[RMDB]
RNA sequence: GGGAACGACUCGAGUAGAGUCGAAAAGAUGGACAGGGCAAAGUAUAGGGGCACAGAGUUUCCAAGCCCUCUCUGGGCAAGCCACCCUCCUAGCACCUCCACAAGGUCUGCAACCAGGAAGCUCAUCAAGAGUUUUUAUGGAGCUUGAUCUCUAGCCUAAAUCACAUGGAUUCGUCCAUGUGAUUUAAAAAGAAACAACAACAACAAC
Reactivity to DMS in 0.01 (KOAc 150mM, MgCl2 10mM, bicine 150mM(pH8.5), 24C), signal-to-noise 2, nucleotides 027 to 156: g010a080u000g030g020a070c040a050g000g050g000c010a090a090a130g010u000a100u000a080g030g020g020g030c030a100c120a090g020a120g000u000u000u000c040c060a060a300g040c000c010c010u020c150u020c120u000g020g010g000c020a050a080g000c060c030a140c040c000c030u000c020c020u000a170g020c040a060c020c010u000c010c020a060c090a080a090g020g010u000c030u000g020c000a110a140c020c000a110g000g010a060a020g000c010u010c000a110u000c200a170a200g010a040g020u010u010u000u010u010a040u050g020g010a300g000c000u040u000g000a060u000c000u010c040u000a120g000c050c070
Reactivity to 2A3 in 0.01 (KOAc 150mM, MgCl2 10mM, bicine 150mM(pH8.5), 24C), signal-to-noise 3, nucleotides 027 to 156: g070a160u060g000g030a010c060a070g040g000g020c050a080a070a050g040u070a110u180a210g000g030g020g010c080a050c070a060g120a030g070u080u130u070c120c060a070a040g010c000c030c000u040c010u000c040u060g000g000g000c060a070a010g020c020c010a050c010c010c000u000c000c000u010a030g000c010a040c030c000u000c010c000a020c030a050a010g000g010u000c020u020g000c000a030a060c000c000a000g000g020a000a010g000c010u000c010a120u150c110a260a110g010a010g000u000u050u010u030u030a110u060g000g000a000g000c000u020u080g030a020u020c030u020c070u120a100g010c010c010